[RMDB]
RNA sequence: GGGAACGACUCGAGUAGAGUCGAAAAUUAUCCAUCACGUGCGGUAAGCGCGCAGAUGUAGCUGGCGCAAUACGAGAUCUAUGCGGCGGACUUCGUGUUGAAUUUGGUGUCGCCCAAGUUAUUAACGGCUACGAAUUCACUAUACACAACGGCGAUCACGAUCGGAUCUAUUCGUAGAUCCGAUCGUAAAAGAAACAACAACAACAAC
Reactivity to 2A3 in 0.01 (KOAc 150mM, MgCl2 10mM, bicine 150mM(pH8.5), 24C), signal-to-noise 1, nucleotides 027 to 156: u110u060a030u050c000c000a040u070c050a020c030g030u030g030c020g120g070u180a190a070g060c010g000c010g020c000a030g070a030u170g120u170a000g020c040u030g040g000c080g000c160a050a000u020a130c080g020a050g050a060u030c030u000a070u300g040c040g000g000c030g000g000a000c020u000u130c170g010u020g000u020u020g000a010a070u010u000u060g030g010u070g010u030c020g020c000c040c020a030a020g020u030u050a130u080u100a220a040c000g030g030c050u030a000c060g020a000a000u030u000c010a000c000u200a040u050a210c070a000c000a150a000c060g080g000c020g000a010u100c010